This 177-nucleotide RNA was probed chemically with 2A3 and DMS.
RNA sequence: GGGAACGACUCGAGUAGAGUCGAAAAGGUGUGCCCAACAACAUCGACAUGAUUGCGCUGUCCUUUGUGCGCAAGGGGUCUGAUCUUGUUAAUGUCCGACAGGUUCUUGGGCCUUAUGCAAAAAACACCUACACACCUACUUCGGUAGGUGUGUAGGAAAAGAAACAACAACAACAAC
Reactivity to 2A3 in 0.01 (KOAc 150mM, MgCl2 10mM, bicine 150mM(pH8.5), 24C), signal-to-noise 2, nucleotides 027 to 126: g080g010u070g050u100g070c000c050c000a000a030c030a000a000c000a030u100c040g060a020c020a070u150g020a130u130u010g000c020g000c030u070g060u230c020c030u150u180u100g120u100g060c040g000c020a000a010g000g000g010g010u030c030u060g020a050u020c020u050u020g060u080u080a150a080u120g060u020c050c030g010a010c020a060g100g020u100u080c040u130u120g010g000g030c000c000u080u090a100u100g060c100a000a000a060a000a070a020c040a010
Reactivity to DMS in 0.01 (KOAc 150mM, MgCl2 10mM, bicine 150mM(pH8.5), 24C), signal-to-noise 2, nucleotides 027 to 126: g020g010u020g020u000g000c040c010c020a090a050c080a060a050c050a070u000c040g010a100c030a030u010g000a160u010u000g000c080g010c020u000g000u010c130c130u010u000u010g040u000g040c090g020c010a060a110g010g000g000g030u000c000u010g050a010u000c050u050u000g000u010u000a080a060u000g010u010c060c050g000a030c090a030g000g010u010u010c080u010u000g000g000g010c040c020u000u000a040u010g000c110a000a040a040a050a050a040c160a100

Source information: The RNA was probed in 150 mM KOAc, 10 mM MgCl2 and 150 mM bicine (pH 8.5) at 24 C. Reactivities are given for positions 27 through 126. The data come from the RNA Mapping Database (RMDB), library OK2TST.